[RMDB]
RNA sequence: GGGAACGACUCGAGUAGAGUCGAAAAUCGAUUGGCAAGAGGGGCGCUACCUCUUUAGCUUUGCACAACGUAUACAAAUUAUCGAUGCACCAGAGGAGAUGCGCAUCCUUCGCUACGAUCUCCACACCUGAUAGGAUAGCUUCGGCUAUCCUAUCAGAAAAGAAACAACAACAACAAC
Reactivity to DMS in 0.01 (KOAc 150mM, MgCl2 10mM, bicine 150mM(pH8.5), 24C), signal-to-noise 4, nucleotides 027 to 126: u000c010g000a110u020u020g010g010c020a110a120g000a030g020g000g010g020c030g000c040u000a100c060c000u000c000u000u000u000a150g030c190u010u000u000g020c050a040c040a100a090c080g000u020a010u000a160c300a090a080a090u000u000a020u000c020g010a140u000g000c020a070c300c170a140g000a030g000g000a040g010a030u010g000c000g010c020a040u000c020c020u000u010c220g010c000u000a030c010g010a040u010c080u000c030c050a120c170a090c220
Reactivity to 2A3 in 0.01 (KOAc 150mM, MgCl2 10mM, bicine 150mM(pH8.5), 24C), signal-to-noise 4, nucleotides 027 to 126: u020c000g060a100u120u150g020g010c040a190a110g020a020g050g020g000g000c020g020c010u030a040c010c000u000c000u070u030u040a020g010c000u070u060u120g010c020a030c030a200a180c090g080u120a040u080a100c150a080a190a070u210u070a050u150c060g020a080u030g010c010a010c040c030a010g030a010g030g010a100g010a070u080g010c000g000c000a170u210c010c000u040u020c020g020c010u020a020c010g000a010u010c020u000c060c010a090c000a040c030
Description:
Structure probing data (DMS and 2A3) for a 177-nucleotide construct. It was measured as part of the RMDB library OK2TST. For 2A3, 4,923 sequencing reads were counted. Reactivities are given for positions 27 through 126. The RNA was probed in 150 mM KOAc, 10 mM MgCl2 and 150 mM bicine (pH 8.5) at 24 C.